This 177-nucleotide RNA was probed chemically with 2A3. Values cover nucleotides 27 to 126. The reactions ran in a buffer of 150 mM KOAc, 10 mM MgCl2 and 150 mM bicine (pH 8.5), at 24 C. For 2A3 the reverse transcriptase was SuperScript II with manganese. The 2A3 profile rests on 390 reads.
[RMDB]
RNA sequence: GGGAACGACUCGAGUAGAGUCGAAAACUGCAGUUGCUCGCAUUGGCCAGGGCGCGUCUGGUUGACCUCGACAUUCUGCUGCUGGAUGAGGCCACCGUGGCCCUGGAUCCUGCCACCGAGGCCGUGGGGCACAGGGUGGCUUCGGCCACCCUGUGCCAAAAGAAACAACAACAACAAC
Reactivity to 2A3 in 0.01 (KOAc 150mM, MgCl2 10mM, bicine 150mM(pH8.5), 24C), signal-to-noise 1, nucleotides 027 to 126: c000u000g110c030a130g000u020u110g000c000u120c060g070c010a070u040u120g010g000c000c000a000g020g000g080c130g020c000g170u000c150u170g080g000u090u160g060a240c000c000u030c000g000a000c030a150u000u300c070u200g090c000u050g030c010u000g060g170a180u030g000a010g000g000c000c000a130c030c020g000u050g060g000c000c000c000u010g000g000a000u000c010c000u000g000c000c000a070c010c030g020a100g000g000c000c000g000u100g000g120